[RMDB]
RNA sequence: GGGAACGACUCGAGUAGAGUCGAAAAAGAGGUUGCAGUGAGCCUAGACUGCACCACUGCACUCCAGCCUGGGCGAAAAGAGCCAAACUCCAUCUCAAAAAACAAACAAAAAAACAAAACAAAAGAACAGGUUAUCCGUUUUCGAACGGAUAACCUGAAAAGAAACAACAACAACAAC
Reactivity to 2A3 in 0.01 (KOAc 150mM, MgCl2 10mM, bicine 150mM(pH8.5), 24C), signal-to-noise 1, nucleotides 027 to 126: a000g000a050g010g090u110u020g000c050a000g000u010g010a030g040c000c000u110a080g060a070c080u050g000c020a000c000c000a000c070u030g000c010a000c050u000c000c000a030g000c010c000u070g040g000g000c000g050a000a090a050a050g110a000g000c030c000a000a000a040c080u000c020c000a070u000c000u040c080a100a080a000a060a060a060c090a100a050a010c100a050a010a150a000a000a000a000c210a040a130a000a000c050a100a100a010a000g070a020a060

Chemical mapping of a 177-nucleotide RNA with 2A3. Values cover nucleotides 27 to 126. It was measured as part of the RMDB library OK1LIB. The reactions ran in a buffer of 150 mM KOAc, 10 mM MgCl2 and 150 mM bicine (pH 8.5), at 24 C.